[RMDB]
The record gives the reactivity of an RNA of 177 nucleotides to 2A3 and DMS.
The RNA was probed in 150 mM KOAc, 10 mM MgCl2 and 150 mM bicine (pH 8.5) at 24 C.
RNA sequence: GGGAACGACUCGAGUAGAGUCGAAAACCGACCGACAAGGCGUUCAAGACGCACGGCUGCCAACCCUGGCAGAACACGGGCAGCGAAGGCGCUGCCCCUGCCGGAGUUCCUGGACCUGAAGCGGGGGUCCCACACGGAAUUUCGAUUCCGUGUGGGAAAAAGAAACAACAACAACAAC
Reactivity to 2A3 in 0.01 (KOAc 150mM, MgCl2 10mM, bicine 150mM(pH8.5), 24C), signal-to-noise 2, nucleotides 027 to 126: c000c000g020a050c000c000g050a050c030a060a030g030g030c100g010u030u040c130a040a030g070a020c020g060c090a050c040g030g010c000u080g000c000c000a030a050c110c000c020u040g000g010c000a010g000a030a020c140a000c010g000g000g000c010a000g000c000g090a280a090g210g070c040g000c030u000g000c000c000c000c000u000g000c000c010g020g000a030g020u020u070c000c000u030g060g000a030c000c000u050g040a110a000g000c000g000g000g000g010g030
Reactivity to DMS in 0.01 (KOAc 150mM, MgCl2 10mM, bicine 150mM(pH8.5), 24C), signal-to-noise 1, nucleotides 027 to 126: c000c000g000a300c040c050g000a040c040a060a300g000g000c090g010u000u020c080a090a090g060a060c040g020c010a240c130g020g010c040u070g000c000c000a060a010c040c060c210u030g000g000c010a000g010a180a020c110a150c300g000g000g000c000a000g000c000g010a290a110g000g000c150g010c020u000g010c000c000c020c000u000g000c140c000g030g060a240g000u000u000c020c000u000g010g000a010c020c020u000g020a120a110g000c000g010g020g000g000g060
For DMS, 1,066 sequencing reads were counted.